[RMDB]
RNA sequence: GGGAACGACUCGAGUAGAGUCGAAAACGGCGUGCCAUGAAGAUUGCCGCUUGCAGUCGUGUGUAGGGUAUGCAGGUCUGCGUGCGCGUCCAGCCAGAGGACGAAUUGCUCCUUGCCGAGUUCGGCCGGUAGGCCUAUUAUUCGUAAUAGGCCUACCAAAAGAAACAACAACAACAAC
Reactivity to DMS in 0.01 (KOAc 150mM, MgCl2 10mM, bicine 150mM(pH8.5), 24C), signal-to-noise 9, nucleotides 027 to 126: c100g010g000c020g010u010g000c030c030a070u010g010a090a080g010a050u010u010g010c030c130g010c040u000u010g000c050a050g010u010c100g000u020g020u010g020u010a070g010g010g010u010a050u020g010c050a060g000g000u010c020u010g000c060g010u010g000c030g020c020g010u010c020c050a090g000c030c060a100g010a100g000g000a040c040g010a090a090u030u030g000c070u000c020c020u000u010g000c030c020g000a140g010u010u010c020g000g010c230c160
Reactivity to 2A3 in 0.01 (KOAc 150mM, MgCl2 10mM, bicine 150mM(pH8.5), 24C), signal-to-noise 9, nucleotides 027 to 126: c030g020g010c020g040u090g030c040c030a090u110g050a040a070g090a110u070u190g040c030c020g040c050u030u110g010c020a040g030u100c070g080u060g020u030g040u140a100g030g090g050u110a060u150g040c020a010g040g070u020c020u030g020c020g040u040g010c040g000c010g020u010c010c010a030g040c030c020a060g020a050g060g010a020c020g040a080a080u100u120g020c020u020c010c010u020u070g020c010c010g040a050g090u120u170c030g030g020c030c020
The record gives the reactivity of an RNA of 177 nucleotides to DMS and 2A3. 2A3 adducts were read by reverse transcription with SuperScript II with manganese. DMS adducts were read by reverse transcription with MarathonRT. The DMS profile rests on 82,685 reads. Reactivities are given for positions 27 through 126. The RNA was probed in 150 mM KOAc, 10 mM MgCl2 and 150 mM bicine (pH 8.5) at 24 C.